[RMDB]
An RNA of 177 nucleotides, treated with 2A3 and DMS and read out base by base.
Reactivities are given for positions 27 through 126.
For 2A3, 1,302 sequencing reads were counted.
The data come from the RNA Mapping Database (RMDB), library OK1LIB.
The reactions ran in a buffer of 150 mM KOAc, 10 mM MgCl2 and 150 mM bicine (pH 8.5), at 24 C.

RNA sequence: GGGAACGACUCGAGUAGAGUCGAAAAGAUGUCGAACGCGCGAUUGGCAAUGCCGUAGUACACAGCACCGAUCGGAAGAACAGCCGAAGCAAUGAUGCCGUCAACAAAAGGAUCGUUCGGCGGGCCGAUAGCCCACCGAUUUCGAUCGGUGGGCUAUAAAAGAAACAACAACAACAAC
Reactivity to 2A3 in 0.01 (KOAc 150mM, MgCl2 10mM, bicine 150mM(pH8.5), 24C), signal-to-noise 2, nucleotides 027 to 126: g050a000u110g020u030c040g100a100a030c000g020c020g030c040g070a030u000u120g010g000c050a000a050u080g030c000c000g000u050a020g040u150a010c030a000c000a010g000c010a000c010c000g000a060u080c010g000g000a100a000g040a070a030c020a120g010c000c010g060a020a000g160c160a070a210u260g010a030u040g190c040c000g060u100c130a130a100c030a020a180a010a030g100g000a030u040c010g030u010u050c000g000g000c000g040g030g000c000c010g100
Reactivity to DMS in 0.01 (KOAc 150mM, MgCl2 10mM, bicine 150mM(pH8.5), 24C), signal-to-noise 2, nucleotides 027 to 126: g040a160u000g000u000c000g020a020a040c080g000c130g000c020g020a130u030u030g000g020c140a120a070u010g000c050c070g000u020a130g020u030a130c060a070c110a070g030c090a130c080c010g000a050u000c040g000g000a060a050g000a080a070c170a100g000c020c010g050a150a050g010c090a040a020u030g010a220u020g000c020c030g020u020c140a100a060c240a080a020a080a180g000g010a100u010c020g000u000u000c060g000g000c000g000g010g030c050c030g000